[RMDB]
RNA sequence: GGGAACGACUCGAGUAGAGUCGAAAAGCCCAGAAGCCUCCCCUCAAAAUCGUUUCAGUCCAAAAUUGAUUCGGCGGCCCUGUCAUGAGGCCGAAGCGAAGGCACGUACCCCUUCGAAUGGCGUCGGAACUUUCAGUCGUAUUCGUACGACUGAAAAUACAUCUUAAGGAUUCGUCCUUAAGAUGUAAAAAGAAACAACAACAACAAC
Reactivity to 2A3 in 0.01 (KOAc 150mM, MgCl2 10mM, bicine 150mM(pH8.5), 24C), signal-to-noise 2, nucleotides 027 to 156: g020c020c000c020a050g170a140a040g110c010c030u020c020c020c050c000u030c020a060a070a000a030u070c020g010u000u020u040c000a020g030u000c050c020a050a090a140a130u090u080g020a070u050u020c000g010g010c010g030g000c000c000c000u070g060u120c040a170u090g050a020g030g000c010c000g020a000a000g010c010g010a010a020g010g000c070a000c110g150u150a080c040c040c010c010u010u010c000g030a030a080u090g030g000c020g010u070c040g050g050a020a070c020u010u020u010c010a010g000u000c000g000u010a040u050u040c150g030u030a000c000g000a000c000u000g000a000a000a000a010
Reactivity to DMS in 0.01 (KOAc 150mM, MgCl2 10mM, bicine 150mM(pH8.5), 24C), signal-to-noise 3, nucleotides 027 to 156: g020c020c000c020a170g010a100a130g000c010c010u000c010c000c010c000u020c030a070a100a110a050u000c030g030u000u000u000c040a070g050u010c070c110a080a080a160a130u000u010g010a070u010u000c040g010g000c020g010g010c010c010c040u000g000u010c080a110u000g000a080g030g020c000c000g010a040a070g010c030g010a060a030g000g030c040a110c090g030u010a150c040c050c010c000u000u010c030g010a080a140u000g010g020c040g020u000c020g020g000a050a110c100u000u000u010c000a010g010u000c010g030u000a030u000u000c250g030u000a010c010g020a020c010u000g000a000a000a020a210